[RMDB]
RNA sequence: GGGAACGACUCGAGUAGAGUCGAAAAUGAUAGAUACCUACCGCCCACACGACGCCACCUGCUGCAGCCAUUGCAGCGAGAACUCCGAGAACAAUCACCAUGAGCCUGUUAUCGGCUUUAUAUGCGGGAAAGAAAGGGAGUUCGCUCCCUUUCUUUCAAAAGAAACAACAACAACAAC
Reactivity to 2A3 in 0.01 (KOAc 150mM, MgCl2 10mM, bicine 150mM(pH8.5), 24C), signal-to-noise 1, nucleotides 027 to 126: u150g010a090u110a100g020a060u150a200c010c020u010a010c010c050g040c000c000c000a020c010a010c050g050a020c050g000c000c000a080c050c040u050g000c010u000g000c000a010g180c040c060a100u180u100g010c010a000g010c000g030a020g010a020a000c060u000c030c000g040a020g020a120a010c040a060a030u030c050a020c080c020a020u030g020a010g020c050c000u060g000u060u050a100u230c060g010g010c000u000u050u020a110u070a030u140g050c150g000g060
Reactivity to DMS in 0.01 (KOAc 150mM, MgCl2 10mM, bicine 150mM(pH8.5), 24C), signal-to-noise 3, nucleotides 027 to 126: u010g000a110u000a050g020a170u010a100c050c010u000a050c090c020g010c060c030c020a130c070a090c090g000a080c090g010c040c040a050c060c060u000g030c000u000g020c000a010g020c120c160a100u010u000g020c000a020g010c020g010a050g000a080a070c100u000c020c020g010a080g000a110a050c120a080a080u010c050a070c060c080a110u000g000a070g000c030c020u000g000u020u010a090u000c140g000g000c060u000u010u020a040u000a060u000g000c090g000g020